[RMDB]
RNA sequence: GGGAACGACUCGAGUAGAGUCGAAAACGCGCAGAUGGCUGAUCGAAGGCCCGGCGCACUUGCGCGGCGAACAGAUCGACAACGCGGGCAACGCCGCGAUCGAGGCGCUGCGCAACAACCAGGCGAACCAGUUGCUUUCUUUCGAGAAAGCAACUGGAAAAGAAACAACAACAACAAC
Reactivity to DMS in 0.01 (KOAc 150mM, MgCl2 10mM, bicine 150mM(pH8.5), 24C), signal-to-noise 1, nucleotides 027 to 126: c150g040c000g000c080a060g000a050u050g000g010c010u000g000a160u020c060g000a090a300g010g000c000c000c180g000g000c030g020c010a100c140u010u000g010c050g000c000g000g000c000g010a160a070c090a280g000a090u030c000g000a000c110a110a070c110g010c000g000g030g020c200a080a190c200g000c000c080g000c000g000a000u030c070g000a100g010g000c000g000c000u000g000c000g020c000a040a000c170a090a240c010c010a080g030g020c110g000a010a200
Reactivity to 2A3 in 0.01 (KOAc 150mM, MgCl2 10mM, bicine 150mM(pH8.5), 24C), signal-to-noise 2, nucleotides 027 to 126: c140g030c000g010c000a020g030a120u120g050g000c040u070g060a100u210c080g220a110a110g050g070c010c000c030g020g020c000g050c000a000c030u080u030g010c040g000c000g000g000c040g020a150a040c040a100g100a190u000c000g070a120c060a300a050c080g000c010g000g000g000c120a230a200c160g020c030c000g000c000g040a070u020c000g000a040g000g000c000g000c000u000g000c020g000c000a000a000c010a000a000c000c010a040g160g000c020g080a010a110

Source information
An RNA of 177 nucleotides, treated with DMS and 2A3 and read out base by base. For DMS, 1,319 sequencing reads were counted. Values are in units of 0.01, from 0 to 300, in steps of 10. The data come from the RNA Mapping Database (RMDB), library OK1LIB.